[RMDB]
RNA sequence: GGGAACGACUCGAGUAGAGUCGAAAAAGGGCAGGGUGGUUGCUAACGGCAACCCGGGGUGACCCGCGGGACAGUGCCACAGAAAACAGACCGCCCGGCCGACAGCGGCCGGGUAAGGGUGAAACGGACCCUAUCUACCUUUCGAGGUAGAUAGGGUAAAAGAAACAACAACAACAAC
Reactivity to DMS in 0.01 (KOAc 150mM, MgCl2 10mM, bicine 150mM(pH8.5), 24C), signal-to-noise 3, nucleotides 027 to 126: a090g010g010g000c080a070g010g000g010u030g000g010u000u010g000c040u010a070a130c220g030g000c020a030a000c000c000c040g000g010g010g030u040g000a130c030c000c000g030c070g010g020g000a080c190a030g000u000g020c000c010a080c120a080g000a070a080a030a190c140a050g020a050c000c070g000c000c000c000g000g030c020c000g030a140c300a240g010c100g020g020c000c010g000g010g010u000a000a050g000g000g000u000g000a050a090a130c090g000g000
Reactivity to 2A3 in 0.01 (KOAc 150mM, MgCl2 10mM, bicine 150mM(pH8.5), 24C), signal-to-noise 2, nucleotides 027 to 126: a000g060g020g070c060a040g080g000g030u060g030g000u020u010g020c020u080a100a090c100g050g030c000a000a060c000c010c020g010g000g000g030u060g100a140c030c040c020g010c050g000g020g020a060c040a070g080u040g130c040c020a060c020a020g110a020a140a000a000c020a030g090a120c000c000g000c040c020c000g000g000c020c000g020a040c030a070g300c080g040g000c060c040g050g000g000u030a090a090g030g020g000u030g020a070a030a020c020g080g010
An RNA of 177 nucleotides, treated with DMS and 2A3 and read out base by base. Values cover nucleotides 27 to 126. The reactions ran in a buffer of 150 mM KOAc, 10 mM MgCl2 and 150 mM bicine (pH 8.5), at 24 C. For 2A3 the reverse transcriptase was SuperScript II with manganese. For DMS, 3,870 sequencing reads were counted.